[RMDB]
RNA sequence: GGGAACGACUCGAGUAGAGUCGAAAAGUGGCAUACUUCGGUAUGCCACAAACCAGACCCUAUCUGGAACACGCUCUACUGCGUGAUCCCUAGUAGAUCCCAAAAGUCGUGGGUUCGCCCACGACAAGGAUUACUACCACUUCGGUGGUAGUAAUCCAAAAGAAACAACAACAACAAC
Reactivity to DMS in 0.01 (KOAc 150mM, MgCl2 10mM, bicine 150mM(pH8.5), 24C), signal-to-noise 2, nucleotides 027 to 126: g000u000g000g020c000a000u000a000c000u010u020c240g010g040u000a010u000g000c000c000a010c000a000a040a090c090c040a150g000a080c210c070c050u000a130u000c050u020g000g000a110a150c040a010c030g020c010u000c150u000a090c100u000g000c020g000u000g000a070u000c030c020c020u000a030g000u000a080g020a110u000c000c000c020a040a020a120a150g010u000c000g010u000g000g010g010u000u000c220g010c010c010c000a010c000g000a000c000a070a020
Reactivity to 2A3 in 0.01 (KOAc 150mM, MgCl2 10mM, bicine 150mM(pH8.5), 24C), signal-to-noise 2, nucleotides 027 to 126: g010u000g000g000c000a000u010a010c000u030u040c190g090g000u000a000u000g010c000c000a000c010a000a000a000c000c000a020g020a010c060c000c040u050a080u070c050u060g030g000a040a040c010a010c010g010c010u030c050u190a110c100u110g000c000g000u010g030a050u050c000c000c010u000a010g040u020a010g020a070u020c040c000c000a030a110a050a000g020u000c000g000u010g010g020g000u030u020c210g080c000c010c000a000c030g000a000c000a000a020